Chemical mapping of a 177-nucleotide RNA with DMS and 2A3.
2A3 adducts were read by reverse transcription with SuperScript II with manganese.
Reactivities are given for positions 27 through 126.
The DMS profile rests on 1,068 reads.
The reactions ran in a buffer of 150 mM KOAc, 10 mM MgCl2 and 150 mM bicine (pH 8.5), at 24 C.
DMS (dimethyl sulfate) methylates the pairing face of unpaired adenines and cytosines.
Source: RMDB library OK2TRN, as collected in RNAgym.

[RMDB]
RNA sequence: GGGAACGACUCGAGUAGAGUCGAAAAUACUGCAGUGACUAGGGUACUCUAGCAGGUACACUACAGUGAGACGAUCGCUAGGCGCGAUCUCCAUGUCGACUAGGAUCUAUGGUACGCUAGUACCAUGAUGGGCCGCAUAUUUCGAUAUGCGGCCCAUAAAAGAAACAACAACAACAAC
Reactivity to DMS in 0.01 (KOAc 150mM, MgCl2 10mM, bicine 150mM(pH8.5), 24C), signal-to-noise 2, nucleotides 027 to 126: u020a060c040u000g020c060a020g010u000g000a170c040u010a000g020g010g000u000a040c080u000c010u010a090g010c210a110g030g030u000a070c020a180c010u000a000c050a040g040u030g020a160g020a060c110g000a020u000c010g040c000u000a100g000g030c200g000c000g020a010u000c040u000c060c040a040u020g010u010c100g000a110c070u000a060g010g000a070u020c030u050a020u010g010g000u000a010c010g030c280u000a160g010u010a020c010c010a010u000g010
Reactivity to 2A3 in 0.01 (KOAc 150mM, MgCl2 10mM, bicine 150mM(pH8.5), 24C), signal-to-noise 1, nucleotides 027 to 126: u100a030c020u060g040c060a020g020u000g110a030c000u020a060g070g100g030u090a060c010u000c000u110a010g000c060a060g030g030u070a020c110a020c020u130a030c020a020g070u030g060a240g020a070c150g030a100u020c020g040c100u070a040g130g300c050g030c050g050a020u000c000u010c020c020a070u220g030u040c050g030a070c090u090a080g020g070a020u000c030u120a000u070g020g020u000a010c020g080c180u010a020g000u020a000c020c000a000u020g010